Chemical mapping of a 207-nucleotide RNA with DMS and 2A3. For 2A3, 990 sequencing reads were counted. Values are in units of 0.01, from 0 to 300, in steps of 10. It was measured as part of the RMDB library OK3TST. DMS (dimethyl sulfate) methylates the pairing face of unpaired adenines and cytosines.

[RMDB]
RNA sequence: GGGAACGACUCGAGUAGAGUCGAAAACAAAAGUGUUCGCAAAUUCAUUUACAAACUAUGGUCAAAGGAAACAGAGUGUAUACGCGCCGCGCUAAAAAACCAUCAUUAUCAUCAAACUCAAUAUUAUGCAAAAUGUUUGUUUUGCAACGAGGCCGGCAAGUCUAUUCAGGUUCGCCUGAAUAGACUUAAAAGAAACAACAACAACAAC
Reactivity to DMS in 0.01 (KOAc 150mM, MgCl2 10mM, bicine 150mM(pH8.5), 24C), signal-to-noise 1, nucleotides 027 to 156: c000a050a070a120a240g010u000g010u000u000c050g020c040a080a040a080u010u020c100a120u000u010u000a150c040a040a050a040c040u000a100u000g020g040u010c040a050a120a120g000g000a060a040a200c130a070g000a120g040u000g030u000a120u000a090c010g020c100g060c000c040g020c020g000c070u000a010a070a010a070a010a060c010c010a030u000c020a020u000u010a070u000c020a010u000c050a070a040a140c040u000c020a010a100u000a090u000u010a080u010g010c050a010a080a050a040u010g000u000u000u010g010u000u010u000u000g010c000a040a070c000g000a050g020g010c000c040g000g040c070
Reactivity to 2A3 in 0.01 (KOAc 150mM, MgCl2 10mM, bicine 150mM(pH8.5), 24C), signal-to-noise 3, nucleotides 027 to 156: c010a000a050a030a050g080u080g040u140u120c040g010c110a050a100a170u160u070c030a060u120u130u220a080c060a090a170a060c050u080a060u080g030g010u100c060a010a040a160g030g000a050a120a050c030a030g050a020g070u050g040u020a060u030a150c030g020c010g010c030c010g080c000g040c070u150a130a120a000a010a060a000c030c000a010u040c010a040u040u150a050u110c020a020u000c020a080a060a130c060u020c070a050a040u070a130u300u100a040u090g040c020a010a010a100a140u060g070u080u040u020g020u000u020u030u010g000c010a010a090c030g020a080g030g010c010c000g000g000c010